[RMDB]
RNA sequence: GGGAACGACUCGAGUAGAGUCGAAAAGGCGACGUUGCGGGCCCUGGGCGCCAGGAGAGCUUCCCGGAGUCGACCUUCCUGCUGGCUGCUCUGUGACCGCUUCCCGGCUCUGCCCUCUUGGCCGAAGCAGUCUGAUCCAUUUCGAUGGAUCAGACUGAAAAGAAACAACAACAACAAC
Reactivity to 2A3 in 0.01 (KOAc 150mM, MgCl2 10mM, bicine 150mM(pH8.5), 24C), signal-to-noise 3, nucleotides 027 to 126: g060g000c030g010a040c060g040u070u080g020c030g010g030g020c000c000c020u060g010g040g040c050g040c020c020a010g010g040a100g010a020g030c050u080u030c000c000c020g000g010a030g010u030c030g050a300c000c010u050u050c010c010u050g030c010u020g000g000c030u080g010c010u030c030u040g050u060g030a040c020c000g000c000u020u010c010c000c000g000g000c010u010c010u030g020c000c000c000u020c010u070u110g020g000c010c020g010a030a000g040
Reactivity to DMS in 0.01 (KOAc 150mM, MgCl2 10mM, bicine 150mM(pH8.5), 24C), signal-to-noise 2, nucleotides 027 to 126: g000g000c050g000a060c080g000u010u010g020c010g000g000g010c090c070c080u000g000g000g030c100g030c040c020a070g000g000a090g000a100g000c090u000u000c010c010c030g000g000a060g010u000c010g010a120c070c040u000u020c060c030u000g000c040u030g000g070c030u010g030c020u000c050u010g020u030g020a090c050c030g010c030u000u000c030c020c030g010g000c020u010c050u000g010c020c000c020u010c080u000u000g010g030c060c030g010a090a120g000